Source: RMDB library ARCHII, as collected in RNAgym. An RNA of 207 nucleotides, treated with 2A3 and read out base by base.
RNA sequence: GGGAACGACUCGAGUAGAGUCGAAAAGCCUCGUUAAAAGCGGCACAAAUGUAAUUGCCAACAACGAUUACGAAUACGCAAUGGCAGCCUAAUUAGGCUUGCCGCACUGAUUGGCUGACGUCAGAUACGCCGACCAGUGACAAACUUAUCCGACUGGGCAUACGCCCAGGUUCGCCUGGGCGUAUGCAAAAGAAACAACAACAACAAC
Reactivity to 2A3 in 0.01 (KOAc 150mM, MgCl2 10mM, bicine 150mM(pH8.5), 24C), signal-to-noise 1, nucleotides 027 to 156: g020c010c000u070c130g040u000u130a040a130a050a140g040c040g000g000c040a000c090a210a050a140u250g020u070a000a100u040u070g050c070c010a150a100c070a130a000c070g010a070u040u040a000c010g000a010a130u230a130c070g020c090a070a140u100g000g000c010a020g040c000c000u260a260a260u300u290a040g000g000c030u050u160g000c030c000g000c060a000c010u000g020a020u040u000g010g000c040u020g000a000c050g000u000c000a000g000a090u020a080c020g000c010c000g000a100c000c000a000g000u000g040a130c040a000a210a000c070u210u200a090u040c000c020g040a040c030u040g000g110

The 2A3 profile rests on 334 reads.